This 177-nucleotide RNA was probed chemically with 2A3 and DMS.
The DMS profile rests on 1,504 reads.
The RNA was probed in 150 mM KOAc, 10 mM MgCl2 and 150 mM bicine (pH 8.5) at 24 C.
DMS (dimethyl sulfate) methylates the pairing face of unpaired adenines and cytosines.
For DMS the reverse transcriptase was MarathonRT.
RNA sequence: GGGAACGACUCGAGUAGAGUCGAAAAGAUAUGGAUCUAUGGAUAGCGCGAAACUAUUCUGUCGGAAACGACAGAUAGGAGCUACAUAGAUCCUAAGUCAAAACACGUGAGGUUCGCCUCACGUGAAGACUUUACAGUGCUUCGGCACUGUAAAGUCAAAAGAAACAACAACAACAAC
Reactivity to 2A3 in 0.01 (KOAc 150mM, MgCl2 10mM, bicine 150mM(pH8.5), 24C), signal-to-noise 2, nucleotides 027 to 126: g000a000u010a010u030g000g010a000u010c010u030a000u000g160g120a300u210a220g000c000g030c160g260a170a070a010c000u030a020u300u300c000u000g020u010c010g000g000a020a010a000c000g000a010c010a000g000a000u000a000g000g010a090g030c000u040a020c000a020u000a030g010a010u010c000c000u000a000a000g010u000c000a030a000a030a130c030a000c010g000u020g000a010g090g000u120u170c300g190c070c000u000c010a000c000g000u000g000a000a020
Reactivity to DMS in 0.01 (KOAc 150mM, MgCl2 10mM, bicine 150mM(pH8.5), 24C), signal-to-noise 1, nucleotides 027 to 126: g000a020u000a010u020g000g000a000u000c000u010a000u000g010g000a180u000a020g020c000g040c200g000a140a050a090c000u000a000u000u000c000u000g010u000c000g010g000a020a010a020c000g000a000c020a000g010a010u000a000g020g010a020g010c000u010a090c000a000u000a000g000a030u000c000c000u010a000a060g010u010c000a140a050a110a200c030a020c030g000u000g010a010g000g010u010u020c280g020c020c000u040c000a000c010g010u010g000a040a040